An RNA of 177 nucleotides, treated with DMS and 2A3 and read out base by base. As a SHAPE reagent, 2A3 marks flexible, mostly unpaired nucleotides at the ribose 2'-OH. The RNA was probed in 150 mM KOAc, 10 mM MgCl2 and 150 mM bicine (pH 8.5) at 24 C. 2A3 adducts were read by reverse transcription with SuperScript II with manganese.
RNA sequence: GGGAACGACUCGAGUAGAGUCGAAAAUUCACUAUCAUUGAGUAGAAGGAGAACGGCGCUAGGACUAUGUCGCGAUGACGUUCCUUACAUCUCAAUAUCACGUGGAUAGAUAACGCCGUUCCGCUGGAGAAAGCGAAAGUUUCGACUUUCGCUUUCUAAAAGAAACAACAACAACAAC
Reactivity to DMS in 0.01 (KOAc 150mM, MgCl2 10mM, bicine 150mM(pH8.5), 24C), signal-to-noise 4, nucleotides 027 to 126: u030u030c030a060c040u000a060u020c100a140u030u030g010a060g010u000a040g000a080a030g020g020a120g010a000a000c000g000g000c000g000c030u000a060g000g000a090c050u010a000u010g010u020c030g010c040g000a150u020g030a020c020g010u000u020c030c020u010u040a090c230a090u030c130u050c100a050a050u010a040u010c040a050c030g020u000g000g010a010u000a020g010a100u030a040a080c020g000c000c000g000u010u000c010c010g010c050u000g000g000
Reactivity to 2A3 in 0.01 (KOAc 150mM, MgCl2 10mM, bicine 150mM(pH8.5), 24C), signal-to-noise 4, nucleotides 027 to 126: u010u030c040a030c080u100a120u250c070a160u090u110g050a030g040u110a040g030a120a010g130g030a130g020a060a010c000g020g040c010g050c050u040a050g030g110a070c050u040a050u080g170u110c010g000c010g120a100u050g030a000c010g020u020u030c000c000u020u110a070c040a190u080c040u020c110a020a060u040a030u040c050a010c090g020u020g030g000a000u000a020g060a020u060a010a020c020g000c020c020g000u000u010c000c020g000c030u030g080g050